RNA sequence: GGGAACGACUCGAGUAGAGUCGAAAAAAAAUCAGGUGAUUUCUUGGCGUACAGAGUUCAUAUAACCAAGGCAGGAAGAGCACUACGAUUGCUUUUUUGGAAGGAUGAUUAUGAAAUGGUUAUUUCCAAUGUUGGAAAUAAAAGUGAACUAUUAAUCGAUGUGAUGAAUGUUCGCAUUCAUCACAUCAAAAGAAACAACAACAACAAC
Reactivity to 2A3 in 0.01 (KOAc 150mM, MgCl2 10mM, bicine 150mM(pH8.5), 24C), signal-to-noise 3, nucleotides 027 to 156: a000a000a000a000u090c050a040g020g030u040g050a110u020u080u060c010u020u010g040g000c030g030u030a060c020a050g060a020g020u020u030c020a050u100a000u020a110a030c070c000a050a030g080g010c010a010g030g020a030a030g030a010g020c010a000c050u100a060c160g100a110u060u040g020c000u040u060u060u010u100u100g050g060a050a040g040g020a040u020g020a010u020u100a030u150g040a020a060a070u040g070g000u010u000a000u010u020u000c000c010a040a020u290g080u230u100g120g010a010a010a010u050a010a020a020a020g070u060g040a040a010c000u030a070u230u140a090a060u160c070
Reactivity to DMS in 0.01 (KOAc 150mM, MgCl2 10mM, bicine 150mM(pH8.5), 24C), signal-to-noise 1, nucleotides 027 to 156: a080a000a120a150u000c000a090g010g030u000g010a130u000u000u000c020u010u010g020g030c080g030u000a130c020a090g000a110g030u020u000c030a110u010a060u000a090a080c000c050a050a140g020g000c020a100g000g010a010a080g000a050g000c060a060c100u000a050c210g050a090u010u010g040c010u020u000u000u000u000u010g040g060a100a070g020g020a080u000g020a040u000u000a030u000g000a090a090a100u010g000g000u000u000a050u000u000u030c010c020a050a140u000g010u000u000g010g000a020a000a080u010a010a020a080a050g000u000g000a090a100c030u010a060u000u000a070a130u020c070